The record gives the reactivity of an RNA of 177 nucleotides to DMS and 2A3. 2A3 adducts were read by reverse transcription with SuperScript II with manganese.
[RMDB]
RNA sequence: GGGAACGACUCGAGUAGAGUCGAAAAAUCACACAGCCGACGGUCAUUUCCGCCGGAAAUGGUGGCAACAAUGGCAAUGGCAAUGCCAGCGGAAAGCAGAGCAACCAAACGGCCAAACAGAAGGCGGAAUAAUAGAACGAUUCGUCGUUCUAUUAUUAAAAGAAACAACAACAACAAC
Reactivity to DMS in 0.01 (KOAc 150mM, MgCl2 10mM, bicine 150mM(pH8.5), 24C), signal-to-noise 9, nucleotides 027 to 126: a090u010c030a050c040a100c070a090g010c020c000g010a060c060g000g010u010c300a140u010u000u000c010c010g020c020c010g010g010a030a030a070u010g010g010u000g000g010c090a070a060c110a060a120u010g010g010c020a060a080u000g010g000c060a100a070u000g000c000c020a110g020c100g000g000a070a070a090g010c030a070g010a110g010c040a060a080c040c030a020a070a130c150g010g000c010c030a040a080a090c140a130g010a110a080g010g010c040g010g000
Reactivity to 2A3 in 0.01 (KOAc 150mM, MgCl2 10mM, bicine 150mM(pH8.5), 24C), signal-to-noise 6, nucleotides 027 to 126: a000u070c020a010c000a000c010a030g050c020c000g040a050c030g030g010u060c040a110u070u110u040c030c030g010c020c010g010g030a020a020a020u090g030g020u020g020g000c020a060a040c030a070a140u070g030g000c020a030a100u050g030g020c010a010a050u060g010c000c010a020g030c020g050g120a150a030a010g020c030a020g060a010g060c020a120a300c020c000a080a080a010c060g060g000c010c000a060a050a000c060a050g120a100a020g040g010c020g010g020